[RMDB]
RNA sequence: GGGAACGACUCGAGUAGAGUCGAAAAGCACGUCCGGCAAGGCCCGUGCGAACACUUGAGCUCCGGUUUGGCCGCUCUUGUGGAUUAGGACGUUCUAGCUCCGGCUUGGCCGCUAGUUCGUCCGAAACAUCGCCAUCAUAUUCGUAUGAUGGCGAUGAAAAGAAACAACAACAACAAC
Reactivity to 2A3 in 0.01 (KOAc 150mM, MgCl2 10mM, bicine 150mM(pH8.5), 24C), signal-to-noise 5, nucleotides 027 to 126: g020c000a000c000g030u060c040c000g020g120c180a110a150g120g000c100c080c000g010u000g000c030g000a050a020c020a000c000u010u020g010a010g010c020u030c060c060g230g060u140u130u190g240g030c030c040g000c010u010c000u000u000g010u020g040g010a040u040u180a060g000g000a000c000g000u000u000c000u000a010g000c020u060c100c020g160g060c130u140u290g140g030c020c030g000c010u000a010g010u000u000c000g000u000c010c000g000a000a000a000
Reactivity to DMS in 0.01 (KOAc 150mM, MgCl2 10mM, bicine 150mM(pH8.5), 24C), signal-to-noise 3, nucleotides 027 to 126: g000c010a020c020g010u030c020c010g020g020c130a100a120g000g010c130c140c010g020u000g020c000g000a140a130c010a000c000u000u000g000a030g020c010u000c060c000g020g040u030u030u020g010g020c090c160g020c020u000c020u000u000g000u010g030g000a130u010u030a110g030g000a020c020g000u000u000c000u000a010g000c040u030c100c070g020g000c040u040u020g030g010c050c110g020c010u010a010g000u000u000c010g010u000c000c000g000a060a050a180